[RMDB]
An RNA of 207 nucleotides, treated with 2A3 and read out base by base. Values are in units of 0.01, from 0 to 300, in steps of 10. For 2A3, 591 sequencing reads were counted. As a SHAPE reagent, 2A3 marks flexible, mostly unpaired nucleotides at the ribose 2'-OH.

RNA sequence: GGGAACGACUCGAGUAGAGUCGAAAAAGCAGGAGUACGCUCCUGCAUGGGUAGACGAAUUGACCCCAACUGAAGUUCAAUUCUAACGUUAAAAGGAGUUUUAUAUGACUGGAAGUACGCGUCCAGAUGACGAUUUCAUUCUUCGGAAUGAAAUCAAGUCUCAACUAUCGUUCGCGAUAGUUGAGACAAAAGAAACAACAACAACAAC
Reactivity to 2A3 in 0.01 (KOAc 150mM, MgCl2 10mM, bicine 150mM(pH8.5), 24C), signal-to-noise 1, nucleotides 027 to 156: a000g000c000a000g010g030a000g000u050a040c200g020c050u000c010c010u000g020c000a000u060g000g000g000u120a130g020a150c000g000a010a000u000u000g000a020c010c040c070c000a030a020c190u250g000a070a000g030u090u000c000a000a000u020u000c060u080a110a040c080g080u030u220a020a070a020a030g080g000a090g020u070u080u180u020a280u000a080u180g160a040c000u030g000g010a020a020g120u050a020c150g040c070g090u090c000c000a040g000a130u050g080a040c060g000a000u000u000u000c010a030u000u000c000u020u000c070g120g000a000a000u000g000a000a000a000u000c000a000a000